This 207-nucleotide RNA was probed chemically with DMS and 2A3. For DMS the reverse transcriptase was MarathonRT.
RNA sequence: GGGAACGACUCGAGUAGAGUCGAAAAGUUCCCUCUUAGCGUGGAGGUUUAACUACGCUCGUUCCCCAUAUCGGUGUGGGCGCACCAGAUUUAUAAAUCAAAGUCCUUUAGGGAACGGAAAGGAACAAAAAUCCAUGGGAGUUCGCUCCCAUGGAAAGGUAUUGAAUUUGUUCGCAAAUUCAAUACCAAAAGAAACAACAACAACAAC
Reactivity to DMS in 0.01 (KOAc 150mM, MgCl2 10mM, bicine 150mM(pH8.5), 24C), signal-to-noise 2, nucleotides 027 to 156: g000u000u000c010c000c000u010c060u000u000a040g030c020g010u000g010g010a130g020g040u020u010u000a110a110c050u000a020c020g070c010u010c010g020u010u000c010c020c000c050a210u010a090u000c040g040g030u000g030u000g010g000g020c070g010c050a030c010c020a130g020a060u000u000u000a120u000a140a150a090u000c060a100a120a150g020u010c000c010u000u010u010a100g020g010g020a050a090c030g000g000a040a060a040g000g030a080a080c050a020a100a100a120a170u000c000c010a000u000g000g000g010a070g070u000u020c300g010c000u010c000c000c000a010u010g010g000a010a020a050
Reactivity to 2A3 in 0.01 (KOAc 150mM, MgCl2 10mM, bicine 150mM(pH8.5), 24C), signal-to-noise 2, nucleotides 027 to 156: g030u030u020c000c000c000u000c010u020u030a020g000c020g000u010g000g020a020g040g080u050u230u160a040a060c010u010a010c000g000c000u000c010g000u000u000c000c000c000c000a030u060a020u130c060g000g000u000g010u020g020g010g040c090g000c010a000c010c010a010g020a030u120u200u020a240u160a140a090a030u180c130a050a080a050g010u010c010c000u010u040u160a050g030g000g000a020a000c030g000g010a070a070a060g050g000a050a000c030a060a080a040a030a030u000c010c000a000u000g000g000g000a010g030u050u060c130g050c040u000c000c000c000a000u020g000g000a000a000a000
The DMS profile rests on 3,241 reads.